Background
The record gives the reactivity of an RNA of 177 nucleotides to 2A3 and DMS. It was measured as part of the RMDB library RFM100. 2A3 is a SHAPE reagent: it acylates the 2'-hydroxyl of flexible nucleotides of all four kinds. For DMS, 2,054 sequencing reads were counted. The 2A3 profile rests on 2,628 reads.

[RMDB]
RNA sequence: GGGAACGACUCGAGUAGAGUCGAAAAAGAUGGCGGCGUUUGCAUAGGGUGCAAAUACUGCAGGCAUACGAGAUGUGGAAAGGCGGCCAAAGGACGAAUCUUCUAAGGAAAGUCCAGGAACUCCAAUCACAUAUAUCCCGUUCGCGGGAUAUAUGUGAAAAGAAACAACAACAACAAC
Reactivity to 2A3 in 0.01 (KOAc 150mM, MgCl2 10mM, bicine 150mM(pH8.5), 24C), signal-to-noise 4, nucleotides 027 to 126: a000g140a030u100g030g020c040g010g010c020g030u030u020u050g030c010a010u080a130g190g040g040u040g020c000a000a090a030u160a090c050u050g050c020a020g060g000c000a060u080a110c060g040a020g050a200u110g030u080g060g050a090a050a020g050g000c000g010g000c020c000a080a060a010g010g000a010c030g030a050a040u010c030u180u090c080u140a060a010g040g000a030a020a010g010u000c010c000a030g040g050a050a040c010u000c040c020a030a070u030
Reactivity to DMS in 0.01 (KOAc 150mM, MgCl2 10mM, bicine 150mM(pH8.5), 24C), signal-to-noise 2, nucleotides 027 to 126: a010g010a050u010g000g000c000g050g070c010g040u030u000u060g000c030a030u000a090g020g000g070u030g000c000a060a060a160u010a070c010u000g000c010a080g020g000c010a090u030a160c080g000a100g000a110u000g000u000g000g000a070a020a030g000g030c030g020g020c010c100a030a120a120g000g000a010c000g000a070a150u010c030u020u020c220u010a090a080g000g000a000a020a120g000u000c000c000a120g000g000a060a040c150u000c020c060a060a190u000